[RMDB]
Notes:
Source: RMDB library M2RFPK, as collected in RNAgym. The record gives the reactivity of an RNA of 207 nucleotides to DMS and 2A3. For DMS the reverse transcriptase was MarathonRT.
RNA sequence: GGGAACGACUCGAGUAGAGUCGAAAAGGACUGCGCAGUCCGGCAACAUCAGCAGAGAGCCCGCUAUACGUGACGGAUUGGCUGAAGCGUACAGAAAUAUUGAGCCUCCUGCAAGUGGCAGCCAAGCAAAACGUACGUGAGUUCGCUCACGUACGAACAAGAUGCCUUACUUCGGUAAGGCAUCUUGAAAAGAAACAACAACAACAAC
Reactivity to DMS in 0.01 (KOAc 150mM, MgCl2 10mM, bicine 150mM(pH8.5), 24C), signal-to-noise 2, nucleotides 027 to 156: g000g000a060c010u030g010c120g030c100a090g000u000c050c000g020g000c030a050a050c060a110u000c040a240g000c060a070g000a130g010a080g000c000c000c000g000c050u000a050u010a040c060g000u000g020a300c050g020g000a260u010u000g030g000c000u010g000a110a300g040c010g010u010a070c030a030g020a070a060a140u000a210u010u000g000a100g010c010c010u000c060c000u000g020c030a080a110g050u000g010g000c010a040g020c010c030a020a150g000c070a040a020a090a180c010g000u000a000c000g030u010g010a010g030u000u000c300g010c020u000c000a020c000g020u000a000c000g000a030a110
Reactivity to 2A3 in 0.01 (KOAc 150mM, MgCl2 10mM, bicine 150mM(pH8.5), 24C), signal-to-noise 3, nucleotides 027 to 156: g020g000a030c030u050g010c180g010c090a040g020u000c000c000g020g000c020a030a040c000a120u130c020a010g010c040a010g070a010g000a010g090c020c070c030g000c030u040a050u010a070c050g010u040g080a020c040g000g050a080u090u070g050g020c020u040g020a070a010g010c000g010u020a030c060a020g160a070a170a010u230a100u130u150g030a050g030c000c020u000c000c010u010g000c020a090a070g020u040g100g000c000a010g000c000c000a030a030g010c030a060a070a000a000c010g010u000a000c000g020u000g000a010g010u020u110c230g000c130u000c000a000c000g010u000a000c000g000a000a000